Chemical mapping of a 207-nucleotide RNA with 2A3 and DMS. The 2A3 profile rests on 1,284 reads. It was measured as part of the RMDB library OK3TST. Values cover nucleotides 27 to 156. For DMS the reverse transcriptase was MarathonRT.
[RMDB]
RNA sequence: GGGAACGACUCGAGUAGAGUCGAAAAGGUUUACGUUUGUAGAUCGGUGUCCGUUUGGAUAUCAAGAGGGAUUUUGCGUGCAAACCUCGGAGUAUAUGUUUUUUGAUGUAUUCCUGGAGACCUGGAGGGAUUUUGGCUUUUAGUGUCGAGCAUGCUGGAUUUAAUUUAAAUUCGUUUAAAUUAAAUCAAAAGAAACAACAACAACAAC
Reactivity to 2A3 in 0.01 (KOAc 150mM, MgCl2 10mM, bicine 150mM(pH8.5), 24C), signal-to-noise 2, nucleotides 027 to 156: g020g000u000u010u080a050c040g030u050u150u290g030u050a010g000a030u020c070g010g060u030g010u040c030c040g020u050u180u300g010g010a010u030a010u060c070a090a060g010a040g050g010g010a020u010u060u020u080g020c020g000u020g010c000a000a000a110c000c020u010c050g000g000a000g020u020a000u000a010u050g100u050u210u000u030u100u170g040a030u030g000u020a000u010u040c000c010u030g030g000a030g050a040c000c000u000g000g000a010g020g040g020a010u060u080u030u120g000g000c000u000u000u020u120a050g000u020g010u050c020g010a010g000c020a000u020g010c000u020g000
Reactivity to DMS in 0.01 (KOAc 150mM, MgCl2 10mM, bicine 150mM(pH8.5), 24C), signal-to-noise 2, nucleotides 027 to 156: g010g020u000u000u000a050c020g020u000u020u020g010u010a040g000a040u000c020g030g030u010g010u010c010c010g000u000u000u020g040g010a070u000a060u010c040a070a110g010a110g010g010g000a160u000u000u010u000g010c060g000u010g010c030a070a060a080c030c010u010c050g010g000a080g030u000a030u000a030u000g000u000u000u010u010u000u000g010a050u010g010u000a070u000u000c000c010u000g030g000a100g000a120c050c030u000g000g020a100g030g020g010a150u000u000u000u000g000g020c030u000u000u000u000a080g020u010g010u010c020g000a110g030c020a070u010g010c020u000g000